[RMDB]
RNA sequence: GGGAACGACUCGAGUAGAGUCGAAAAGAUUCGGCGGCCCUGUCAUGAGGCCGAAACGAAGGCACGUACCCCUUCGAAUGGCGUCGGGGAGUCAGCGGCUAUAUAUGCGCCUUAUGCUGGCAUCCGGGAGAACCCUCAUCCUUCGGGAUGAGGGUAACGUAACGAACUCUUUCGAGAGUUCGUUACGAAAAGAAACAACAACAACAAC
Reactivity to 2A3 in 0.01 (KOAc 150mM, MgCl2 10mM, bicine 150mM(pH8.5), 24C), signal-to-noise 2, nucleotides 027 to 156: g110a090u100u090c030g050g060c020g020g010c070c000c030u010g060u160c100a050u010g020a000g020g010c040c020g030a020a000a000c040g010a010a000g050g020c060a000c300g080u200a090c000c010c000c000u000u040c050g020a120a030u070g080g060c110g150u030c030g030g100g000g000a090g050u000c030a020g000c000g050g020c040u050a000u010a000u030a020u300g120c080g010c010c020u110u080a070u280g000c000u000g000g000c000a090u000c010c000g030g020g000a150g040a000a000c000c000c000u030c000a000u010c000c020u040u070c160g070g010g000a010u000g000a000g000g000g000u000a010a010